Source information
Structure probing data (2A3 and DMS) for a 177-nucleotide construct. Conditions: 150 mM KOAc, 10 mM MgCl2 and 150 mM bicine (pH 8.5), 24 C. Source: RMDB library OK1LIB, as collected in RNAgym.
RNA sequence: GGGAACGACUCGAGUAGAGUCGAAAAAUCAUGCCUGCCGUGUUCUCCACGUCCACCGUCACCUUGUUGAGCGACAUGCGCCCGUCGAGUACGGCCUGACCGUUCUGGUCCCGAGGGAACGGAUUGGCCGGGCGAAAGUAUUCGUACUUUCGCCCGGAAAAGAAACAACAACAACAAC
Reactivity to 2A3 in 0.01 (KOAc 150mM, MgCl2 10mM, bicine 150mM(pH8.5), 24C), signal-to-noise 3, nucleotides 027 to 126: a000u080c030a060u110g010c000c020u020g030c020c030g040u020g040u050u030c010u020c000c000a020c000g080u000c000c020a040c020c020g050u050c020a030c030c020u070u030g040u070u060g070a050g060c020g080a040c010a050u160g000c030g020c000c030c020g020u010c020g020a050g040u080a060c020g020g020c010c010u060g080a110c010c000g010u030u000c010u000g090g010u020c000c010c010g030a080g030g000g010a000a030c020g030g000a010u100u160g050g010
Reactivity to DMS in 0.01 (KOAc 150mM, MgCl2 10mM, bicine 150mM(pH8.5), 24C), signal-to-noise 2, nucleotides 027 to 126: a040u000c030a080u010g020c010c000u000g000c040c000g000u000g000u010u000c040u000c030c050a150c070g030u010c020c030a020c080c100g000u030c020a060c030c030u010u000g000u000u000g010a160g020c050g020a030c040a110u020g000c050g010c000c010c000g010u000c050g000a140g020u020a090c100g000g000c010c030u000g020a060c000c020g010u010u000c020u020g000g000u030c000c060c020g020a190g010g000g030a070a020c020g010g000a130u000u050g000g010